[RMDB]
Chemical mapping of a 207-nucleotide RNA with 2A3. For 2A3 the reverse transcriptase was SuperScript II with manganese.
RNA sequence: GGGAACGACUCGAGUAGAGUCGAAAAGUAGAGUGUAUCAUGUCAGUAAGCAUGCCGGGGAAUGGUGGUUUACCCCGUUAUCAAAUGAUUACCGACCAAUAAUUGGCGAAACUCGUUUGGCGUUGGCAAAGUCACGGCGUGUUCGCACGCCGUGAAACUUCAAAGUCCGAUUCGUCGGACUUUGAAGAAAAGAAACAACAACAACAAC
Reactivity to 2A3 in 0.01 (KOAc 150mM, MgCl2 10mM, bicine 150mM(pH8.5), 24C), signal-to-noise 2, nucleotides 027 to 156: g090u080a030g010a010g030u080g010u040a060u090c020a040u110g080u010c020a030g050u120a110a000g040c020a030u070g070c040c060g010g000g000g000a020a010u040g010g000u020g010g030u020u030u110a040c000c010c000c010g010u040u050a030u060c030a030a050a020u050g020a040u070u050a040c020c000g050a120c060c050a030a030u290a220a080u160u060g030g010c010g030a030a020a060c040u030c050g010u000u000u080g010g000c000g020u020u000g020g030c060a100a100a030g080u010c000a000c000g000g000c000g000u020g000u030u020c020g010c070a000c010g000c010c000g000u000g000a000a000a000
Overview
It was measured as part of the RMDB library M2RFPK. The RNA was probed in 150 mM KOAc, 10 mM MgCl2 and 150 mM bicine (pH 8.5) at 24 C. Values cover nucleotides 27 to 156.